[RMDB]
An RNA of 177 nucleotides, treated with DMS and 2A3 and read out base by base. For DMS the reverse transcriptase was MarathonRT. Source: RMDB library OK2TST, as collected in RNAgym. For 2A3 the reverse transcriptase was SuperScript II with manganese.
RNA sequence: GGGAACGACUCGAGUAGAGUCGAAAAUAGCCAGUGGUAGAAAUUGAUAAACAUUUGAUUUAUGGAAGCAUUGAUAGGUUUUGACGUUGAAAACCUGAAUAUGGGCAAAACUGGAGAUGUCAACGUCGAUGAUGAAUAGUUUCGACUAUUCAUCAUCAAAAGAAACAACAACAACAAC
Reactivity to DMS in 0.01 (KOAc 150mM, MgCl2 10mM, bicine 150mM(pH8.5), 24C), signal-to-noise 9, nucleotides 027 to 126: u000a110g020c010c000a010g010u000g010g020u010a100g010a110a110a100u000u000g000a040u000a050a050a080c060a200u010u010u010g010a120u000u000u000a030u000g020g010a100a100g010c020a030u000u000g000a240u010a020g000g000u000u000u000u000g010a050c020g000u000u000g000a030a010a020a030c000c000u000g000a060a040u000a030u000g000g010g020c090a050a050a110a040c030u000g000g000a070g010a060u010g010u000c010a010a010c020g010u000c180
Reactivity to 2A3 in 0.01 (KOAc 150mM, MgCl2 10mM, bicine 150mM(pH8.5), 24C), signal-to-noise 6, nucleotides 027 to 126: u060a010g010c000c010a010g010u020g050g060u100a080g110a100a180a130u110u190g030a040u080a070a140a050c060a120u110u130u270g110a150u040u080u110a050u050g060g080a050a010g010c010a000u000u050g020a030u080a080g000g000u010u010u010u040g020a010c000g000u000u010g010a030a010a000a010c000c000u000g000a010a010u070a030u050g030g070g040c010a040a050a020a020c020u020g050g010a070g030a070u120g050u080c010a000a010c010g020u020c050